This 177-nucleotide RNA was probed chemically with DMS and 2A3.
It was measured as part of the RMDB library OK2TST.
The RNA was probed in 150 mM KOAc, 10 mM MgCl2 and 150 mM bicine (pH 8.5) at 24 C.
RNA sequence: GGGAACGACUCGAGUAGAGUCGAAAAACUUCUGUGAAUAUACCCAAAGGUAUUGAAAUCUGUAUCUCAAAGAGACAUCUGCACUCCCAUGUUCAUUGCAGCAUUGCAGCAUUAUUCGCAAUAGCCAAAUUUGGUUGAAUUUCGAUUCAACCAAAUUAAAAGAAACAACAACAACAAC
Reactivity to DMS in 0.01 (KOAc 150mM, MgCl2 10mM, bicine 150mM(pH8.5), 24C), signal-to-noise 4, nucleotides 027 to 126: a130c080u010u010c090u010g020u010g000a080a070u010a090u000a060c020c020c130a060a100a120g010g010u010a020u000u000g000a080a100a050u010c040u010g010u000a040u000c030u000c060a080a060a110g000a100g020a060c080a030u000c040u000g000c050a060c120u000c040c020c020a060u000g000u000u000c080a080u000u000g020c070a060g000c050a050u000u000g010c030a060g010c080a050u000u000a080u010u010c110g010c050a020a050u000a080g020c070c080a040
Reactivity to 2A3 in 0.01 (KOAc 150mM, MgCl2 10mM, bicine 150mM(pH8.5), 24C), signal-to-noise 2, nucleotides 027 to 126: a000c040u130u070c060u130g060u000g030a120a000u090a020u030a090c000c010c000a060a110a030g010g000u010a040u110u090g060a060a110a060u010c040u070g030u050a040u020c040u020c010a160a120a010g050a030g000a020c010a050u020c040u070g030c000a020c000u040c000c020c000a020u020g070u070u040c070a070u030u090g040c020a000g000c020a050u000u060g010c020a010g030c010a050u040u030a060u130u170c020g020c000a050a060u030a080g010c030c020a020
The DMS profile rests on 3,542 reads.